This 177-nucleotide RNA was probed chemically with DMS and 2A3.

[RMDB]
RNA sequence: GGGAACGACUCGAGUAGAGUCGAAAAUACCUGUUGUCUUAGAAAUAAGACUACAGCACAUGAUGAUUGAAUUCUAUGAAUACGUGAUUAUAUUCUGUAUUCUUAAAGGGUUUGCAACACCUUUAUGCAAAGUACAUGACUUCGGUCAUGUACUUUGAAAAGAAACAACAACAACAAC
Reactivity to DMS in 0.01 (KOAc 150mM, MgCl2 10mM, bicine 150mM(pH8.5), 24C), signal-to-noise 3, nucleotides 027 to 126: u010a130c270c000u000g000u000u000g000u010c000u000u010a000g000a160a130a160u000a010a000g000a010c000u010a030c010a020g020c160a100c190a040u000g000a090u010g010a150u000u010g030a070a060u000u000c020u010a070u000g000a030a010u000a020c000g010u000g000a010u000u010a120u000a080u010u000c010u000g010u000a000u000u010c000u000u000a040a050a050g010g000g000u000u000u010g000c160a040a050c100a050c040c040u000u000u010a050u020g000
Reactivity to 2A3 in 0.01 (KOAc 150mM, MgCl2 10mM, bicine 150mM(pH8.5), 24C), signal-to-noise 2, nucleotides 027 to 126: u090a000c020c010u010g000u030u010g000u000c000u020u000a020g030a040a090a030u020a040a000g000a000c020u020a000c010a010g030c040a050c010a110u160g040a050u070g020a050u070u240g100a080a170u140u000c050u090a100u090g010a030a000u010a030c030g020u020g050a020u060u270a160u060a080u300u000c000u000g010u010a010u010u000c000u040u050a140a100a020g040g000g020u030u100u140g040c020a070a040c020a070c020c050u050u060u050a060u100g030
For 2A3 the reverse transcriptase was SuperScript II with manganese.